[RMDB]
RNA sequence: GGGAACGACUCGAGUAGAGUCGAAAAUUUCUUUCAUUGUAGAUUCAAAGCGGUUUUCCAAGUUCACAAUUUUAGUGUUCAAAGCGUAUUCAAUACUAUCCCAGUUGGCCUUUGAUGACUCAAGCUGAUCUCUAGACUCAUUCGUGAGUCUAGAGAUAAAAGAAACAACAACAACAAC
Reactivity to DMS in 0.01 (KOAc 150mM, MgCl2 10mM, bicine 150mM(pH8.5), 24C), signal-to-noise 3, nucleotides 027 to 126: u000u020u010c030u000u000u020c090a100u010u010g020u010a100g010a120u010u000c060a040a080a100g020c070g020g000u000u000u000u010c030c060a060a130g010u000u000c030a050c050a070a120u000u010u020u000a080g010u000g010u000u010c050a070a050a090g000c120g000u000a050u010u010c060a040a060u000a050c070u000a050u000c010c010c000a160g000u000u000g000g020c050c030u000u000u000g020a050u000g000a120c100u000c050a050a090g000c100u000g010
Reactivity to 2A3 in 0.01 (KOAc 150mM, MgCl2 10mM, bicine 150mM(pH8.5), 24C), signal-to-noise 2, nucleotides 027 to 126: u020u010u020c000u040u110u030c030a100u090u140g060u080a060g050a160u040u120c030a000a050a030g040c080g000g000u000u040u090u110c010c000a010a010g000u000u030c010a000c030a080a090u150u110u190u280a140g010u020g000u000u010c000a110a010a030g070c080g040u060a070u040u080c070a080a050u020a100c010u030a060u040c000c010c010a020g010u040u020g030g010c030c040u060u020u030g030a030u060g030a020c010u010c060a000a060g040c020u030g070